Notes
Source: RMDB library RFMREP, as collected in RNAgym. The record gives the reactivity of an RNA of 177 nucleotides to DMS and 2A3. The reactions ran in a buffer of 150 mM KOAc, 10 mM MgCl2 and 150 mM bicine (pH 8.5), at 24 C. DMS (dimethyl sulfate) methylates the pairing face of unpaired adenines and cytosines. Reactivities are given for positions 27 through 126.

RNA sequence: GGGAACGACUCGAGUAGAGUCGAAAAGCCAUCCCAGUGUUCAGACUACCUGUUCAGGAGGCUGGGACAUGUACAGUAGUCUGCACAUUGGUUAGGCAAAAGCUGUUUACCGUUCGCGGUAAACAGCGAAUUUCUAAUACUUCGGUAUUAGAAAUUCAAAAGAAACAACAACAACAAC
Reactivity to DMS in 0.01 (KOAc 150mM, MgCl2 10mM, bicine 150mM(pH8.5), 24C), signal-to-noise 3, nucleotides 027 to 126: g000c000c000a150u010c300c000c000a030g020u010g020u000u000c000a010g000a020c000u000a010c110c080u000g010u010u000c010a050g000g020a120g010g010c040u000g010g010g010a080c080a070u000g000u000a040c050a030g000u000a000g000u000c000u000g010c080a020c010a010u000u000g000g000u000u000a210g000g000c000a110a070a100a150g000c000u000g000u000u000u000a000c000c000g010u000u010c220g020c000g000g020u000a000a000a000c000a000g020c000
Reactivity to 2A3 in 0.01 (KOAc 150mM, MgCl2 10mM, bicine 150mM(pH8.5), 24C), signal-to-noise 3, nucleotides 027 to 126: g000c010c000a030u050c030c000c000a000g010u010g010u000u010c000a000g000a000c000u010a010c020c090u030g000u020u050c010a030g020g080a080g110g090c060u080g060g030g040a070c010a090u080g010u020a020c010a010g000u010a000g000u010c010u000g000c020a000c000a010u000u020g000g000u030u070a070g000g000c000a030a050a020a070g000c010u010g000u000u000u000a000c000c000g020u030u070c250g000c000g070g000u000a010a000a010c000a000g010c010